Record summary:
This 177-nucleotide RNA was probed chemically with DMS and 2A3. The 2A3 profile rests on 4,937 reads. It was measured as part of the RMDB library TTRDES.
[RMDB]
RNA sequence: GGGAACGACUCGAGUAGAGUCGAAAAAAAGAUAUGGAGACGUCUACCCACCUCGUUACGAAGCGAUGAAACAAUUCGGAAACGAAUUGUGGAGCUUCUAUAACGAGAGGACGUCUCCUAAGUCAAACGUAACUACUUUCUUCGGAAAGUAGUUACGAAAAGAAACAACAACAACAAC
Reactivity to DMS in 0.01 (KOAc 150mM, MgCl2 10mM, bicine 150mM(pH8.5), 24C), signal-to-noise 3, nucleotides 027 to 126: a080a080a110g010a130u000a180u020g000g000a040g000a000c000g010u010c000u020a180c020c010c030a300c080c000u000c010g010u000u000a040c300g020a030a010g020c000g000a070u000g000a210a170a010c000a000a020u000u000c000g000g000a150a100a180c000g010a010a020u010u010g010u000g000g010a030g000c000u000u010c010u000a130u000a040a000c020g000a000g010a060g020g010a000c000g000u000c010u010c000c010u000a010a060g030u030c190a080a090a130
Reactivity to 2A3 in 0.01 (KOAc 150mM, MgCl2 10mM, bicine 150mM(pH8.5), 24C), signal-to-noise 2, nucleotides 027 to 126: a010a010a000g220a100u300a170u260g000g010a000g000a000c000g010u000c020u130a300c010c030c000a020c000c000u020c000g000u010u000a010c020g000a000a000g000c020g300a300u020g000a040a030a010c010a000a000u010u000c010g000g050a050a070a050c000g000a000a020u000u010g000u010g010g030a000g000c000u040u000c010u020a010u010a010a000c000g000a000g000a010g010g010a000c000g020u000c000u000c000c000u030a010a000g070u030c050a100a070a040